[RMDB]
RNA sequence: GGGAACGACUCGAGUAGAGUCGAAAAAAACGCCUUUCAGCACGACACCAGCGCCGCCCGGAUGGCCUCCGGCAUGACAUCGCGUGCCCGCCGACCGGAAUCCCACAUUUUCGCUGGGUAAGCCGGGAAUUAGUCCAUACUUCGGUAUGGACUAAUUAAAAGAAACAACAACAACAAC
Reactivity to DMS in 0.01 (KOAc 150mM, MgCl2 10mM, bicine 150mM(pH8.5), 24C), signal-to-noise 7, nucleotides 027 to 126: a050a030a070c100g010c010c010u000u010u010c050a080g030c040a050c040g000a110c070a070c030c030a080g000c040g020c040c030g000c050c010c020g010g010a050u010g010g000c080c040u010c040c040g000g000c070a060u020g010a120c080a060u020c070g030c030g010u010g000c010c010c050g010c090c040g010a110c010c010g010g010a090a080u020c000c000c000a030c050a150u020u020u020u030c170g010c170u000g010g000g010u000a080a100g000c000c010g000g000g000
Reactivity to 2A3 in 0.01 (KOAc 150mM, MgCl2 10mM, bicine 150mM(pH8.5), 24C), signal-to-noise 7, nucleotides 027 to 126: a000a000a010c070g020c020c010u040u080u040c030a020g030c010a000c050g090a030c030a030c040c020a020g020c010g000c040c020g010c000c000c010g040g010a070u110g050g040c000c020u020c020c010g010g000c020a040u090g020a050c020a080u060c060g020c000g070u040g020c000c010c020g030c010c020g050a040c000c000g010g020a010a050u060c000c020c000a010c010a040u150u170u120u180c120g050c100u020g010g010g020u020a020a020g040c000c010g000g000g010
The record gives the reactivity of an RNA of 177 nucleotides to DMS and 2A3. It was measured as part of the RMDB libraries RFM100 and RFMREP.